Conditions: 150 mM KOAc, 10 mM MgCl2 and 150 mM bicine (pH 8.5), 24 C. Structure probing data (DMS and 2A3) for a 177-nucleotide construct. The 2A3 profile rests on 862 reads. Source: RMDB library RFMREP, as collected in RNAgym.
RNA sequence: GGGAACGACUCGAGUAGAGUCGAAAACCUGAGUACAGGACAGUCGUCAGUAGUUCGACGUGAGCAGAAGCCCACCUCGAGAUGCUACGUGGACGAGGGCAUGCCCAAGACACACCUUAACCCUAGCCUUAUCGAACCAGUUCGCUGGUUCGAUAAGAAAAGAAACAACAACAACAAC
Reactivity to DMS in 0.01 (KOAc 150mM, MgCl2 10mM, bicine 150mM(pH8.5), 24C), signal-to-noise 1, nucleotides 027 to 126: c000c000u010g000a090g000u000a070c150a150g030g000a130c090a070g000u020c040g000u000c020a070g020u000a030g020u000u000c010g000a030c200g010u000g000a020g000c010a110g000a160a210g030c010c010c010a000c010c100u010c000g000a090g000a100u010g010c010u000a050c050g010u000g000g000a040c020g000a050g010g020g030c150a070u000g020c030c000c090a090a090g000a040c030a020c060a070c040c010u000u000a070a180c050c010c000u000a110g000c140
Reactivity to 2A3 in 0.01 (KOAc 150mM, MgCl2 10mM, bicine 150mM(pH8.5), 24C), signal-to-noise 1, nucleotides 027 to 126: c000c000u000g070a030g050u050a110c040a020g030g080a070c020a020g110u030c040g000u030c000a000g030u000a010g020u020u020c010g000a000c010g000u030g030a020g030c010a020g100a300a040g000c000c010c000a020c010c010u030c010g060a080g030a200u100g030c010u050a040c130g300u100g150g000a010c000g020a040g040g030g040c060a060u090g020c040c010c000a020a030g040a010c000a000c020a000c070c000u010u040a010a050c030c000c010u040a030g060c010